The record gives the reactivity of an RNA of 207 nucleotides to 2A3. The 2A3 profile rests on 1,262 reads. It was measured as part of the RMDB library M2RFPK. 2A3 adducts were read by reverse transcription with SuperScript II with manganese.
RNA sequence: GGGAACGACUCGAGUAGAGUCGAAAAACAGUCAGUACGCUGACUGAGGGAAACGGGAGCCGGGCUUGGGACAAGAGCCAUCCCAAGUCCAAGGCCAAGUAGGCUCUAGUGAUGAUACGCCAUCACAAAAACUGGUCUACCUUCGGGUAGACCAGAAGUAUUAUCGGCUCUUCGGAGCCGAUAAUACAAAAGAAACAACAACAACAAC
Reactivity to 2A3 in 0.01 (KOAc 150mM, MgCl2 10mM, bicine 150mM(pH8.5), 24C), signal-to-noise 2, nucleotides 027 to 156: a010c000a010g000u010c010a000g040u100a010c230g030c120u000g000a020c010u010g020a090g020g040g020a090a200a120c080g060g010g060a040g080c090c020g040g020g010c000u020u020g000g000g000a010c020a080a040g000a000g000c000c000a030u000c020c010c000a000a000g000u000c000c000a040a010g020g000c050c020a080a020g060u130a110g040g000c000u000c020u050a040g000u000g000a010u020g010a030u040a180c150g060c040c010a000u000c020a000c010a000a090a030a000a030c010u010g010g000u000c000u010a000c000c000u020u070c300g100g000g000u000a000g000a000c000c000a010g000a000a000